[RMDB]
RNA sequence: GGGAACGACUCGAGUAGAGUCGAAAAUUGUCAUGUUUCGACAUGACAAACAUAUGAUCUAGACAAAAACGGCCAAAAAGUCUAGAUCAAAUAAAGGCCGAAGACUAGGUUAGUUCGCUAACCUAAAUUGAAUAAGAUGUUUCGACAUCUUAUUCAAAAAAGAAACAACAACAACAAC
Reactivity to 2A3 in 0.01 (KOAc 150mM, MgCl2 10mM, bicine 150mM(pH8.5), 24C), signal-to-noise 3, nucleotides 027 to 126: u020u000g000u010c000a000u000g030u000u070u100c180g060a010c000a000u000g000a000c000a000a050a000c030a020u230a110u090g010a000u010c000u000a010g000a010c000a050a230a020a080a040c030g010g000c000c000a060a070a060a100a010g000u000c000u000a000g000a000u010c000a010a000a000u020a010a020a010g010g000c000c010g010a070a000g070a060c090u020a000g000g010u000u010a000g000u020u080c190g000c090u000a000a000c000c010u010a000a040a020
Reactivity to DMS in 0.01 (KOAc 150mM, MgCl2 10mM, bicine 150mM(pH8.5), 24C), signal-to-noise 5, nucleotides 027 to 126: u000u000g020u010c000a000u000g000u000u000u010c190g030a020c010a000u000g000a010c000a010a030a120c170a100u000a130u000g010a010u000c000u010a010g000a010c000a090a090a080a080a110c060g000g020c010c020a070a080a120a110a160g000u000c000u000a000g000a000u000c000a020a030a050u010a050a090a100g000g030c010c010g000a130a070g000a110c210u000a010g010g000u000u000a010g000u000u010c190g020c020u000a000a000c000c000u000a000a030a080
Chemical mapping of a 177-nucleotide RNA with 2A3 and DMS.
It was measured as part of the RMDB library M2PK50.
The RNA was probed in 150 mM KOAc, 10 mM MgCl2 and 150 mM bicine (pH 8.5) at 24 C.
DMS adducts were read by reverse transcription with MarathonRT.